[RMDB]
RNA sequence: GGGAACGACUCGAGUAGAGUCGAAAAUGCCGCCGGUUACCAGCUGCCCAUGCAGGUCAGCAGCGCGGCCGACGCGGCACGACUAGCAGUGCGGAUGGAGAACGACGGGGCAACGGCCUGGCGGGCGAUAGUGACGGAGUUUCGACUCCGUCACUAUAAAAGAAACAACAACAACAAC
Reactivity to 2A3 in 0.01 (KOAc 150mM, MgCl2 10mM, bicine 150mM(pH8.5), 24C), signal-to-noise 2, nucleotides 027 to 126: u050g020c010c010g000c000c000g010g000u040u090a060c010c030a040g010c030u010g000c040c010c010a050u210g080c080a060g060g000u040c040a010g010c010a010g040c030g000c030g070g000c000c030g020a040c080g000c020g000g000c000a010c020g010a020c020u040a040g030c030a020g030u040g070c010g050g010a070u080g070g030a150g020a150a010c020g070a020c010g070g020g020g000c020a030a070c030g050g000c010c010u060g060g000c050g020g020g030c020g000
Reactivity to DMS in 0.01 (KOAc 150mM, MgCl2 10mM, bicine 150mM(pH8.5), 24C), signal-to-noise 4, nucleotides 027 to 126: u010g000c020c000g010c010c020g010g000u000u010a080c020c020a150g020c040u010g000c030c030c020a200u020g020c140a300g000g000u010c050a080g020c020a080g010c040g010c060g000g000c050c030g020a110c090g020c000g000g020c000a030c070g000a060c050u020a120g010c050a050g010u000g010c010g000g010a070u000g000g000a170g000a070a060c050g010a100c070g010g000g010g010c030a050a090c130g000g000c040c010u000g010g020c090g010g000g020c070g000
An RNA of 177 nucleotides, treated with 2A3 and DMS and read out base by base. The DMS profile rests on 3,540 reads. Reactivities are given for positions 27 through 126. The RNA was probed in 150 mM KOAc, 10 mM MgCl2 and 150 mM bicine (pH 8.5) at 24 C. The data come from the RNA Mapping Database (RMDB), library OK2TST.